[RMDB]
Structure probing data (2A3) for a 207-nucleotide construct.

RNA sequence: GGGAACGACUCGAGUAGAGUCGAAAACUACGCUUUAGCUGCCUAAUUGCUGCAGCUAGCUCCUCCCGCCAUCGCCCGCGUGGCGUUCGAGGGGCUCAUAUGAAGCGGGCUACGCCCAAAUCCGCCGCCUGAGGAUGAGGGAAGAGACGAACCAGGCCACGAACAGUAAGUUCGCUUACUGUUCGUGAAAAGAAACAACAACAACAAC
Reactivity to 2A3 in 0.01 (KOAc 150mM, MgCl2 10mM, bicine 150mM(pH8.5), 24C), signal-to-noise 4, nucleotides 027 to 156: c040u210a110c050g080c100u130u100u140a010g000c000u010g020c030c010u300a300a300u220u250g080c190u130g000c020a000g000c000u000a000g000c000u000c000c000u000c020c010c000g000c010c000a010u020c080g000c000c000c000g010c000g000u000g010g000c000g010u070u090c060g010a010g000g000g010g000c020u050c010a190u290a100u270g240a130a010g000c000g000g000g000c000u010a010c010g000c000c000c000a010a020a000u010c000c000g000c000c010g000c000c000u000g000a010g000g000a000u000g010a030g000g040g000a010a000g050a010g010a010c140g020a030a040c050c000a010g000g020c020